[RMDB]
RNA sequence: GGGAACGACUCGAGUAGAGUCGAAAAUACCAUUCGUGGUAAACAACCCGUAGGUUCGAUACACAGCUUGGAUUUACACGUAACAUCCACUUCGAAAGAGGUGGUGGUGUUGUCAGCUGUGAUCGAACCUAAACGGCGGUCACUUGUUCGCAAGUAAAUCUAUUACACCGUUCGCGGUGUAAUAGAUAAAAGAAACAACAACAACAAC
Reactivity to 2A3 in 0.01 (KOAc 150mM, MgCl2 10mM, bicine 150mM(pH8.5), 24C), signal-to-noise 6, nucleotides 027 to 156: u070a020c000c000a000u040u100c270g080u080g020g020u070a140a080a080c040a080a100c020c010c000g020u010a010g000g010u010u000c000g000a000u160a150c010a000c000a000g030c020u150u220g120g010a080u270u180u150a020c000a000c000g020u040a060a020c030a300u100c020c010a010c000u000u000c010g120a180a090a090g000a010g000g000u000g000g000u000g000g020u010g000u000u020g000u010c010a000g000c010u000g000u000g000a000u000c000g000a000a000c000c000u000a000a010a000c010g090g020c060g030g080u110c050a050c130u050u060g040u160u120c130g010c130a040a040g040u180a100a210
Reactivity to DMS in 0.01 (KOAc 150mM, MgCl2 10mM, bicine 150mM(pH8.5), 24C), signal-to-noise 3, nucleotides 027 to 156: u010a100c010c000a090u000u020c260g040u000g020g020u010a020a090a110c060a090a130c010c010c020g020u000a010g010g010u000u010c010g030a030u000a200c030a000c020a000g000c000u000u010g030g010a030u000u000u000a010c010a020c010g050u000a050a020c070a150u010c000c000a030c010u000u000c010g010a190a130a270g020a030g000g020u000g000g020u000g030g010u000g010u000u000g010u010c010a060g000c010u000g050u000g010a040u000c000g000a020a020c010c000u000a000a020a040c040g020g020c030g020g010u000c050a080c060u000u000g010u000u010c100g010c040a050a140g010u000a060a150